Source: RMDB libraries RFM100 and RFMREP, as collected in RNAgym. Structure probing data (2A3 and DMS) for a 177-nucleotide construct. Reactivities are given for positions 27 through 126. Reactivities are rounded to 0.1 and cut off at 0 and 3. For 2A3 the reverse transcriptase was SuperScript II with manganese. Conditions: 150 mM KOAc, 10 mM MgCl2 and 150 mM bicine (pH 8.5), 24 C.
[RMDB]
RNA sequence: GGGAACGACUCGAGUAGAGUCGAAAAUGCGUAAGUUUGUUAAGAGAACCGCAAUUUGUGGAUCGCUCUUAUUGAUAGCGAUUUUUAUGAUGAAUAGUUGGAGCGGUAUUCAGAGCGGGCAUAACGCAGCCCGUCUCUAGUUCGCUAGAGACGGGCUAAAAGAAACAACAACAACAAC
Reactivity to 2A3 in 0.01 (KOAc 150mM, MgCl2 10mM, bicine 150mM(pH8.5), 24C), signal-to-noise 2, nucleotides 027 to 126: u120g010c050g010u040a080a060g010u020u060u090g080u030u050a080a030g050a020g010a140a000c000c000g000c010a040a110u080u010u180g110u050g000g040a050u000c000g000c000u000c000u040u180a100u120u220g080a100u210a020g000c000g000a010u000u000u000u020u100a150u050g160a030u100g040a070a060u060a100g070u100u080g010g070a010g030c010g000g030u020a100u000u060c010a010g000a000g100c030g010g000g000c040a020u150a070a030c000g000c020
Reactivity to DMS in 0.01 (KOAc 150mM, MgCl2 10mM, bicine 150mM(pH8.5), 24C), signal-to-noise 2, nucleotides 027 to 126: u030g040c030g060u000a070a120g010u010u010u010g010u020u010a120a140g000a120g030a070a040c000c000g000c000a150a110u000u000u040g010u070g010g000a010u000c020g000c000u010c080u050u050a050u020u000g020a100u030a030g000c000g020a150u020u000u000u090u020a050u070g050a090u040g000a150a050u000a090g000u010u050g000g020a130g000c000g000g000u000a030u020u030c030a010g020a080g010c000g000g050g000c070a110u030a050a050c010g030c000